[RMDB]
RNA sequence: GGGAACGACUCGAGUAGAGUCGAAAACAAAUAUCAAAAGCAGAAGUUCGCCCGUUGCCAGCGCAAUAUCCAGUUUAUCACUGAAACCAUUUAUGGGAAAGGUUUUCUCCCACAUGAAAGCAGGAGCCGAUCUUCCCAAAUUCGUUUGGGAAGAUCGAAAAGAAACAACAACAACAAC
Reactivity to 2A3 in 0.01 (KOAc 150mM, MgCl2 10mM, bicine 150mM(pH8.5), 24C), signal-to-noise 4, nucleotides 027 to 126: c010a000a090a060u250a030u210c060a040a070a070a080g090c050a020g030a140a020g080u100u090c050g030c000c000c000g060u050u050g040c010c000a030g000c030g000c040a010a010u020a010u150c020c040a030g010u000u080u050a150u090c140a080c070u020g030a140a060a040c030c010a110u120u180u130a120u180g010g010g000a060a030a080g040g000u020u010u080u010c060u000c010c010c000a100c000a080u160g080a040a020a020g020c020a020g100g010a000g050c050
Reactivity to DMS in 0.01 (KOAc 150mM, MgCl2 10mM, bicine 150mM(pH8.5), 24C), signal-to-noise 2, nucleotides 027 to 126: c130a050a020a090u100a100u010c090a020a110a050a030g020c060a090g000a080a170g030u020u030c110g010c040c000c020g030u000u000g040c070c000a000g020c070g000c110a090a090u010a110u000c090c000a090g010u020u000u010a030u000c140a030c020u000g020a160a080a080c040c030a080u010u000u010a060u000g010g000g000a080a030a140g020g020u010u000u000u010c070u040c000c000c000a010c170a040u020g020a060a050a110g030c040a090g000g000a150g010c210